Chemical mapping of a 207-nucleotide RNA with 2A3. Values cover nucleotides 27 to 156. The reactions ran in a buffer of 150 mM KOAc, 10 mM MgCl2 and 150 mM bicine (pH 8.5), at 24 C.
[RMDB]
RNA sequence: GGGAACGACUCGAGUAGAGUCGAAAAUCAAGCAAAACCCCAAAACCUUACACUGAGAGCAUUUAGCCUGAUUACUCUUUAAAUCAAAUCAGGCAAUAGAGAGAAACGCGAGAGGUGAAAACCCCACAUAACGAUCUAGGCUUCGGCCUAGAUCGAACAUGAUCCAUAGCUUCGGCUAUGGAUCAUGAAAAGAAACAACAACAACAAC
Reactivity to 2A3 in 0.01 (KOAc 150mM, MgCl2 10mM, bicine 150mM(pH8.5), 24C), signal-to-noise 2, nucleotides 027 to 156: u060c010a000a070g020c030a000a080a130a300c010c020c050c070a070a110a040a020c030c020u150u220a090c090a060c140u140g070a000g000a000g070c010a040u060u050u080a000g000c020c010u000g000a000u010u030a040c010u030c000u000u230u160a020a050a050u230c060a000a000a020u000c000a010g080g000c000a010a000u020a000g010a010g000a000g040a090a080a000c050g030c070g070a080g010a010g110g010u030g020a040a020a000a000c030c020c060c000a030c010a110u210a170a010c010g000a000u000c000u010a000g000g010c010u010u040c250g020g000c000c000u000a000g000a000u000c000g000a010a000